This 177-nucleotide RNA was probed chemically with DMS and 2A3. It was measured as part of the RMDB library OK1LIB. High DMS reactivity at an A or C suggests that its Watson-Crick edge is free. DMS adducts were read by reverse transcription with MarathonRT. Values cover nucleotides 27 to 126. 2A3 adducts were read by reverse transcription with SuperScript II with manganese.
RNA sequence: GGGAACGACUCGAGUAGAGUCGAAAACUAGAGACCGAAGAUAGUUGAGCACUGUGGGGCAUAACAACCCUCGCUCGUUAUCCGAAACCAAGACCUUAGGGGCGGUGAAGUAAUGUAGGGCCUCCACCGAUGAGGGUCCAUUCGUGGACCCUCAUCGAAAAGAAACAACAACAACAAC
Reactivity to DMS in 0.01 (KOAc 150mM, MgCl2 10mM, bicine 150mM(pH8.5), 24C), signal-to-noise 1, nucleotides 027 to 126: c000u000a100g000a180g010a080c080c000g000a040a100g010a110u000a060g010u010u060g030a000g000c040a230c190u010g000u100g000g000g020g040c040a070u050a070a050c290a110a190c010c000c010u000c190g000c010u000c000g000u000u000a030u000c080c000g000a100a190a120c080c050a040a100g000a100c030c080u010u000a080g010g000g000g030c080g000g000u000g000a050a070g000u010a000a010u080g050u030a040g010g000g030c000c000u000c030c000a120c240
Reactivity to 2A3 in 0.01 (KOAc 150mM, MgCl2 10mM, bicine 150mM(pH8.5), 24C), signal-to-noise 2, nucleotides 027 to 126: c020u050a000g000a000g020a060c000c020g010a090a000g060a090u020a050g060u130u300g100a000g000c060a050c130u100g010u200g070g010g010g000c130a130u090a260a000c050a040a040c000c000c000u040c000g000c000u030c000g000u030u000a020u000c030c020g030a040a000a030c000c000a160a040g300a170c000c060u100u250a180g000g030g000g060c040g000g000u010g030a090a080g040u210a060a090u180g000u060a210g010g020g120c010c000u060c030c010a050c020